An RNA of 177 nucleotides, treated with 2A3 and DMS and read out base by base. It was measured as part of the RMDB library OK2TST. The reactions ran in a buffer of 150 mM KOAc, 10 mM MgCl2 and 150 mM bicine (pH 8.5), at 24 C.
RNA sequence: GGGAACGACUCGAGUAGAGUCGAAAAAUCACUAUUUAAUGAAACUAAUGCGGAGUUUACAUCAGGAAUUUGCCCUAACUCCCAGCUUCCUUUGCUGUCUUGGCGAACCCAAAUUUGCUCUCCAACAAUCGGUAUACAGUUUCGACUGUAUACCGAUAAAAGAAACAACAACAACAAC
Reactivity to 2A3 in 0.01 (KOAc 150mM, MgCl2 10mM, bicine 150mM(pH8.5), 24C), signal-to-noise 2, nucleotides 027 to 126: a000u060c020a040c060u130a220u160u120u160a150a090u100g050a060a050a010c050u080a080a050u140g040c070g020g070a040g020u050u050u080a070c070a110u090c010a040g000g070a060a100u110u110u110g050c030c000c010u010a020a000c020u000c000c000c010a010g010c000u030u020c010c000u070u070u080g000c000u030g000u040c020u020u060g050g000c020g020a050a070c000c000c010a030a060a060u080u060u070g030c010u010c000u000c030c010a040a040c010a040
Reactivity to DMS in 0.01 (KOAc 150mM, MgCl2 10mM, bicine 150mM(pH8.5), 24C), signal-to-noise 4, nucleotides 027 to 126: a070u010c060a080c060u000a110u000u000u000a080a060u010g000a060a070a100c080u010a070a100u010g020c110g020g000a080g010u010u000u000a060c100a060u010c100a070g010g000a070a090u010u000u010g010c040c030c020u000a050a080c070u000c010c010c040a110g010c090u010u000c030c020u000u020u000g010c030u000g000u000c050u000u000g000g020c040g000a080a110c030c010c030a040a090a140u000u000u000g000c040u000c040u000c010c040a050a060c230a090
2A3 adducts were read by reverse transcription with SuperScript II with manganese.
Reactivities are given for positions 27 through 126.